RNA sequence: GGGAACGACUCGAGUAGAGUCGAAAAUCUGCUCAGCGUGAUUGCUGAGGGCGGGCCCGGUAACACCGGACCCGAUUUCGGGAAGGCUAGCCCGGUGGGGUUGCUGGUGAUCGUGCUAUUGGUGAUCCAAGUAAGGGUGUUUCGACACCCUUACUUGAAAAGAAACAACAACAACAAC
Reactivity to DMS in 0.01 (KOAc 150mM, MgCl2 10mM, bicine 150mM(pH8.5), 24C), signal-to-noise 5, nucleotides 027 to 126: u010c030u000g020c010u000c010a010g010c000g020u000g020a120u020u020g010c000u000g010a020g010g000g010c030g010g000g010c020c010c000g010g000u000a120a110c140a300c010c010g000g010a020c010c000c000g010a050u000u000u010c040g020g000g000a100a100g010g010c080u010a060g010c040c020c010g030g010u010g000g000g000g010u000u000g010c020u000g000g010u000g000a040u000c080g000u000g000c040u000a120u010u010g020g010u000g000a090u000c060
Reactivity to 2A3 in 0.01 (KOAc 150mM, MgCl2 10mM, bicine 150mM(pH8.5), 24C), signal-to-noise 2, nucleotides 027 to 126: u020c010u070g030c020u000c020a020g020c000g060u050g110a110u120u220g040c000u000g020a020g000g000g040c030g010g030g000c000c090c000g050g000u100a160a050c100a090c100c000g000g030a010c010c000c000g010a020u020u170u180c030g000g010g020a100a010g100g000c080u080a020g000c010c050c000g000g000u090g010g070g000g000u070u090g030c040u090g000g090u050g030a030u040c020g010u020g000c020u110a110u210u060g080g000u040g040a040u070c070